[RMDB]
This 177-nucleotide RNA was probed chemically with DMS. For DMS, 1,000 sequencing reads were counted. For DMS the reverse transcriptase was MarathonRT. The data come from the RNA Mapping Database (RMDB), library OK2TRN.
RNA sequence: GGGAACGACUCGAGUAGAGUCGAAAAAAAAUUGGAAUGUGAUUCCAGGGUUGGUCUCUCACCCAACUGACCUAAUGCCUGCAACUCAUAUUGUGGCUUCUUGUUCAAUGCUGUUUGCUGGAAGCUGAUCGAGAGGAACUUUCGAGUUCCUCUCGAUAAAAGAAACAACAACAACAAC
Reactivity to DMS in 0.01 (KOAc 150mM, MgCl2 10mM, bicine 150mM(pH8.5), 24C), signal-to-noise 1, nucleotides 027 to 126: a060a020a060a050u000u000g010g020a010a010u010g010u000g000a200u000u000c050c010a070g020g000g010u000u000g020g040u000c020u000c030u030c060a190c060c020c060a100a000c070u000g010a080c020c010u010a060a040u000g000c050c040u000g040c130a060a070c110u000c090a060u000a090u000u030g000u000g000g010c000u000u000c020u000u000g000u010u000c050a010a040u000g020c130u000g010u000u000u000g030c050u010g010g000a020a050g000c050u000g000